This 177-nucleotide RNA was probed chemically with 2A3.

[RMDB]
RNA sequence: GGGAACGACUCGAGUAGAGUCGAAAAACAGUGGGUUUUCUUUCGUAGACUUUACGUGUCAAUUCUAAACCAGAAACGUAAGUCUGGAUAGAAUUGAAGACUGAUACAAUGGAAAUGAAAAGUAACCGCUAGCGUCCCAUUUCGAUGGGACGCUAGCAAAAGAAACAACAACAACAAC
Reactivity to 2A3 in 0.01 (KOAc 150mM, MgCl2 10mM, bicine 150mM(pH8.5), 24C), signal-to-noise 1, nucleotides 027 to 126: a070c080a110g030u140g000g000g000u010u000u010u010c000u000u090u150c040g090u000a170g010a200c080u040u190u110a000c050g050u050g090u070c030a050a000u000u040c000u070a000a110a110c000c000a010g090a040a120a040c170g120u130a110a090g080u000c000u000g000g000a000u030a000g000a120a000u000u000g000a050a000g000a000c040u110g000a040u190a070c070a010a200u190g040g030a270a090a000u050g090a040a030a040a040g090u090a080a000c000c000